Source information
The record gives the reactivity of an RNA of 170 nucleotides to 2A3 and DMS. It was measured as part of the RMDB library 15KLIB. The RNA was probed in 150 mM KOAc, 10 mM MgCl2 and 150 mM bicine (pH 8.5) at 24 C. High DMS reactivity at an A or C suggests that its Watson-Crick edge is free.

[RMDB]
RNA sequence: GGGAACGACUCGAGUAGAGUCGAAAACCUCAAGUUUCUUGAGCUUCUUGUUGGUUCGCCGGAGAUCCUUCUCGAGAAUUCGCCUUUUCUUCCUUUCUUCCACCCACUGCUCGAGGAUCUCCUCCCUCACCUAGUAUCUUCGGAUACUAGAAAAGAAACAACAACAACAAC
Reactivity to 2A3 in 0.01 (KOAc 150mM, MgCl2 10mM, bicine 150mM(pH8.5), 24C), signal-to-noise 9, nucleotides 027 to 129: c000c010u070c060a060a050g020u030u060u060c040u060u090g050a050g020c020u060u040c020u070u120g070u050u090g040g030u060u060c060g050c080c040g040g000a020g000a020u020c010c000u080u090c080u040c050g050a050g020a080a120u120u100c040g090c020c000u060u090u060u050c030u050u080c010c000u040u070u030c000u030u000c010c010a040c010c010c010a060c030u060g000c000u010c020g010a010g000g000a020u000c000u000c000c000u020c000c000c000u030c010a090c010
Reactivity to DMS in 0.01 (KOAc 150mM, MgCl2 10mM, bicine 150mM(pH8.5), 24C), signal-to-noise 9, nucleotides 027 to 129: c050c000u030c110a070a070g000u010u010u020c040u050u020g000a210g020c080u010u020c050u020u020g030u020u030g000g000u050u010c060g050c050c040g020g010a020g000a060u030c030c050u040u050c080u030c050g000a040g040a160a120u050u030c070g040c050c040u020u020u020u020c060u000u050c010c000u010u010u010c040u010u010c000c020a080c040c030c040a030c050u040g020c030u000c010g000a030g010g000a080u000c020u000c000c000u020c010c010c000u000c060a170c190